RNA sequence: GGGAACGACUCGAGUAGAGUCGAAAAGAAAUAGGUGCGCAUGACGAUUUCAAGUCGGUCUUGGUAGCGAAUCCGUAAUACAUUCAAUCGCUUUGCAUAAUCGAUUGCUGCAUCCAGAUCGUGAAUCCCACCUAGUAACAUUCGUGUUACUAGGUGGAAAAGAAACAACAACAACAAC
Reactivity to 2A3 in 0.01 (KOAc 150mM, MgCl2 10mM, bicine 150mM(pH8.5), 24C), signal-to-noise 7, nucleotides 027 to 126: g050a010a060a010u110a030g030g000u020g010c010g000c020a010u040g050a080c040g010a020u000u070u060c050a030a020g050u080c030g020g030u030c020u050u100g060g010u050a020g030c030g050a080a110u070c080c010g020u060a060a040u110a100c070a050u040u170c040a010a040u020c010g010c000u070u060u090g060c060a070u080a200a020u040c010g040a040u000u040g010c050u130g000c010a010u000c000c010a020g020a110u050c040g050u060g130a030a060u040c010
Reactivity to DMS in 0.01 (KOAc 150mM, MgCl2 10mM, bicine 150mM(pH8.5), 24C), signal-to-noise 8, nucleotides 027 to 126: g000a040a070a150u000a070g010g020u000g010c040g020c020a030u000g010a180c300g000a040u000u000u000c050a050a060g010u000c020g020g000u000c070u000u000g000g010u000a140g000c040g010a060a100u010c180c060g030u000a060a100u000a070c090a080u000u010c150a090a040u000c020g000c060u000u000u010g010c300a050u010a030a020u000c010g000a130u000u010g010c160u010g040c020a020u000c020c030a040g010a160u000c040g010u000g010a110a120u010c080